[RMDB]
RNA sequence: GGGAACGACUCGAGUAGAGUCGAAAAGCACUGGUCGUACGCGACCAGUGCAAGCCAUCAGGUACGCCUGAUGGCAAAGGUGGAUGUUACCAUAAACAUUAAAGCGGAGCUCUACGGAGCUCCGCAACAGUCCCUAUUUAUUCGUAAAUAGGGACUGAAAAGAAACAACAACAACAAC
Reactivity to 2A3 in 0.01 (KOAc 150mM, MgCl2 10mM, bicine 150mM(pH8.5), 24C), signal-to-noise 8, nucleotides 027 to 126: g000c000a000c000u000g020g000u010c000g020u080a040c300g020c040g130a000c000c000a000g000u000g000c000a000a000g000c000c000a000u000c000a000g060g000u040a040c290g060c090c000u000g000a000u000g000g000c000a090a090a020g010g010u030g040g030a030u020g010u040u030a030c030c030a080u100a030a040a010c010a020u060u070a170a050a010g000c000g000g000a000g000c010u000c010u030a110c300g040g000a000g000c000u000c000c000g000c000a000a000
Reactivity to DMS in 0.01 (KOAc 150mM, MgCl2 10mM, bicine 150mM(pH8.5), 24C), signal-to-noise 2, nucleotides 027 to 126: g020c000a000c000u000g010g000u000c000g030u000a090c250g020c020g040a020c010c010a030g010u010g050c000a030a060g000c000c000a000u010c000a000g000g000u010a120c300g020c020c000u000g000a000u010g000g010c000a050a000a070g010g020u000g020g020a020u000g000u000u010a030c000c020a070u040a020a010a040c020a020u000u020a090a140a090g000c020g050g000a020g000c000u000c010u010a140c110g010g000a000g000c000u010c010c010g010c010a000a020